[RMDB]
RNA sequence: GGGAACGACUCGAGUAGAGUCGAAAAGAUAUGGAUUCCGAGUGGCUUCAACAGCCUGUUCCUCGGAAACGAGGACAGGACAUGAAGCGCGGAAUCCUAAGUCAAAAGAUGUGGUUCGCCACAUCAAGAUAUCUCACAUCUUCGGAUGUGAGAUAUCAAAAGAAACAACAACAACAAC
Reactivity to 2A3 in 0.01 (KOAc 150mM, MgCl2 10mM, bicine 150mM(pH8.5), 24C), signal-to-noise 4, nucleotides 027 to 126: g030a000u030a030u070g000g000a000u000u010c000c010g000a060g240u300g260g010c000u040u030c110a300a160c070a200g010c010c000u000g050u240u220c000c010u000c000g000g010a030a020a010c000g000a000g010g010a010c010a000g000g000a010c050a300u300g010a010a000g000c000g000c000g010g000a000a000u020c000c000u000a000a010g010u000c020a010a040a080a130g010a010u000g010u010g060g030u060u140c300g080c060c000a010c000a000u000c000a000a000
Reactivity to DMS in 0.01 (KOAc 150mM, MgCl2 10mM, bicine 150mM(pH8.5), 24C), signal-to-noise 4, nucleotides 027 to 126: g010a040u000a190u010g000g010a010u010u000c000c010g000a110g040u020g030g020c010u000u000c030a090a070c260a200g000c010c010u000g010u000u010c000c000u000c000g020g020a020a020a050c010g010a020g010g000a030c000a020g000g020a000c050a300u020g020a010a020g030c000g000c000g020g010a030a000u000c000c000u000a020a070g010u000c010a150a090a150a140g000a010u000g020u000g000g010u000u000c280g000c000c000a020c000a010u000c010a100a120
An RNA of 177 nucleotides, treated with 2A3 and DMS and read out base by base. Reactivities are given for positions 27 through 126. Conditions: 150 mM KOAc, 10 mM MgCl2 and 150 mM bicine (pH 8.5), 24 C. DMS adducts were read by reverse transcription with MarathonRT. 2A3 adducts were read by reverse transcription with SuperScript II with manganese.